[RMDB]
RNA sequence: GGGAACGACUCGAGUAGAGUCGAAAAUGCCACCCCAACAUGCGCGCGGCCCGGCGCCACGCCGAAUCGCUGGGUGAGACGGCCGUAUUCGUCGAGGUCGACGGCGAACCAUGCGGGGUCAUCGCGGAAGUAGGGAGUGGUUCGCCACUCCCUACUUAAAAGAAACAACAACAACAAC
Reactivity to 2A3 in 0.01 (KOAc 150mM, MgCl2 10mM, bicine 150mM(pH8.5), 24C), signal-to-noise 1, nucleotides 027 to 126: u100g060c000c000a020c000c000c020c040a070a100c010a070u110g020c030g020c020g030c020g060g000c000c000c000g040g000c080g000c030c040a000c020g000c010c020g060a100a040u040c000g040c110u270g150g140g090u130g030a020g030a020c000g000g110c050c050g010u040a110u060u090c000g000u000c000g000a080g090g000u030c040g010a190c020g100g020c000g010a000a020c020c000a020u090g010c060g010g000g000g000u000c010a120u090c010g060c050g090g100
Reactivity to DMS in 0.01 (KOAc 150mM, MgCl2 10mM, bicine 150mM(pH8.5), 24C), signal-to-noise 3, nucleotides 027 to 126: u010g020c060c120a120c000c000c010c000a080a140c120a060u020g020c080g020c060g000c170g050g000c010c020c000g010g010c010g010c300c270a060c100g010c010c010g010a040a170u010c030g000c080u000g000g040g000u000g000a100g010a300c020g010g020c030c060g000u000a130u000u010c000g010u010c010g000a130g010g040u000c010g000a060c020g020g000c010g000a130a050c190c080a090u010g000c160g020g020g000g000u000c090a060u010c030g030c050g000g010
Annotation: The record gives the reactivity of an RNA of 177 nucleotides to 2A3 and DMS. The data come from the RNA Mapping Database (RMDB), library OK2TRN. DMS (dimethyl sulfate) methylates the pairing face of unpaired adenines and cytosines. Reactivities are rounded to 0.1 and cut off at 0 and 3. For DMS, 1,548 sequencing reads were counted. 2A3 adducts were read by reverse transcription with SuperScript II with manganese.